[RMDB]
RNA sequence: GGGAACGACUCGAGUAGAGUCGAAAAGGGUCAACUGGAGCUGGAGUUCAGUAUGGCCAUGGGCACCCUGAUCUCGGAGCUGGUGCAAGCCAUGCGCUGGGACCAGGCCUCAGACAGACCAAGGAGCCUCCUAGUCUUAUUUCGAUAAGACUAGGAGAAAAGAAACAACAACAACAAC
Reactivity to 2A3 in 0.01 (KOAc 150mM, MgCl2 10mM, bicine 150mM(pH8.5), 24C), signal-to-noise 5, nucleotides 027 to 126: g080g000g000u010c010a020a000c030u000g030g010a050g080c060u080g110g070a240g110u020u010c020a010g010u030a230u080g010g000c020c020a020u040g020g040g000c020a030c010c000c020u030g070a100u040c050u030c110g080g060a040g020c060u030g000g010u030g010c030a040a010g020c010c010a080u200g000c060g010c070u020g010g020g010a000c000c000a020g020g010c010c000u040c000a080g030a140c050a060g030a020c000c030a020a050g120g020a020g100c010
Reactivity to DMS in 0.01 (KOAc 150mM, MgCl2 10mM, bicine 150mM(pH8.5), 24C), signal-to-noise 6, nucleotides 027 to 126: g010g010g010u010c010a070a070c010u000g020g010a050g030c060u010g000g010a170g010u000u000c010a040g020u010a070u010g020g000c020c040a060u000g010g000g010c030a080c250c000c020u000g000a050u010c040u000c050g010g010a100g010c030u000g010g010u000g010c220a120a110g010c000c010a020u010g010c030g010c030u000g000g000g000a020c000c010a110g000g010c100c010u000c020a040g010a130c170a140g000a090c020c020a080a110g000g000a200g000c180